[RMDB]
RNA sequence: GGGAACGACUCGAGUAGAGUCGAAAAUACGUCCACACGGCAUUCGGCAGAUAUUCCGCCGUAUACGUUUGCCAGCGAUGUGCAGGUUAUGGUGAUUAAGAAACAGGCGCUGGGCAUCAGCGUGGUCGUUAGUUCACGAGUUCGCUCGUGAACUAACAAAAGAAACAACAACAACAAC
Reactivity to 2A3 in 0.01 (KOAc 150mM, MgCl2 10mM, bicine 150mM(pH8.5), 24C), signal-to-noise 2, nucleotides 027 to 126: u090a030c060g030u000c010c020a040c010a000c040g010g000c000a010u030u020c040g020g000c020a010g090a130u120a190u300u040c060c020g000c050c000g020u000a080u030a020c090g020u030u080u080g050c000c020a000g000c000g010a040u010g020u020g180c010a040g070g000u080u120a130u230g060g000u110g020a130u110u230a160a080g090a190a140a010c030a000g060g000c150g000c210u010g000g100g060c030a020u040c010a050g020c030g070u010g000g020u010c040
Reactivity to DMS in 0.01 (KOAc 150mM, MgCl2 10mM, bicine 150mM(pH8.5), 24C), signal-to-noise 3, nucleotides 027 to 126: u000a110c090g010u000c000c010a050c070a160c100g010g010c070a070u000u000c030g010g020c030a030g010a150u000a130u010u010c050c040g030c010c000g030u000a060u000a080c140g000u000u000u010g030c030c010a210g000c090g010a070u000g010u000g010c030a070g000g000u010u000a080u010g000g030u010g010a180u000u010a060a110g000a150a090a050c060a060g020g010c030g030c000u000g000g020g010c050a060u000c050a100g020c050g000u000g000g010u000c080